[RMDB]
Structure probing data (DMS and 2A3) for a 207-nucleotide construct. The DMS profile rests on 5,428 reads. Reactivities are rounded to 0.1 and cut off at 0 and 3. 2A3 adducts were read by reverse transcription with SuperScript II with manganese. It was measured as part of the RMDB library OK3TST. The 2A3 profile rests on 3,251 reads.
RNA sequence: GGGAACGACUCGAGUAGAGUCGAAAAGAACACUCAGUGCACACUGUAGACUGUGCUCUCUUCGGCUGUCAAGGGAGGAAUGUGAUCAGAUGCACAUUCCACAGUCUAGACACCAGUGUGCAGUGUUGUCGCAUGAACACUGCACUGAGACAGCCGACGUUACUAGCUAGUUCGCUAGCUAGUAACGAAAAGAAACAACAACAACAAC
Reactivity to DMS in 0.01 (KOAc 150mM, MgCl2 10mM, bicine 150mM(pH8.5), 24C), signal-to-noise 3, nucleotides 027 to 156: g010a060a070c060a080c040u000c030a060g010u000g040c040a060c040a090c060u000g030u000a070g010a060c020u000g010u000g000c040u010c050u000c030u020u010c000g010g000c000u010g030u000c020a090a090g020g000g020a160g000g010a020a010u000g030u020g010a030u000c010a280g010a220u000g010c000a010c010a030u000u000c000c020a150c060a070g020u000c040u000a070g030a180c090a150c300c010a090g000u010g020u000g010c020a010g000u010g010u000u000g020u010c130g040c140a210u000g010a050a050c010a070c020u000g000c000a080c000u000g000a150g020a040c010a030g020c000c010g010a080
Reactivity to 2A3 in 0.01 (KOAc 150mM, MgCl2 10mM, bicine 150mM(pH8.5), 24C), signal-to-noise 3, nucleotides 027 to 156: g040a050a010c100a000c040u070c050a010g010u040g040c020a000c010a010c040u040g040u100a020g030a030c070u030g000u020g030c000u000c000u000c000u000u010c000g000g000c010u000g000u030c010a020a060g030g030g000a040g000g010a000a000u000g000u000g000a050u060c110a040g060a140u210g020c000a000c000a000u000u000c000c000a020c000a000g030u010c040u010a030g110a080c030a030c020c010a010g020u000g000u010g040c000a000g000u000g000u000u020g100u070c070g020c070a060u150g060a010a000c020a000c010u030g000c000a000c020u010g010a010g000a060c010a010g000c000c000g000a000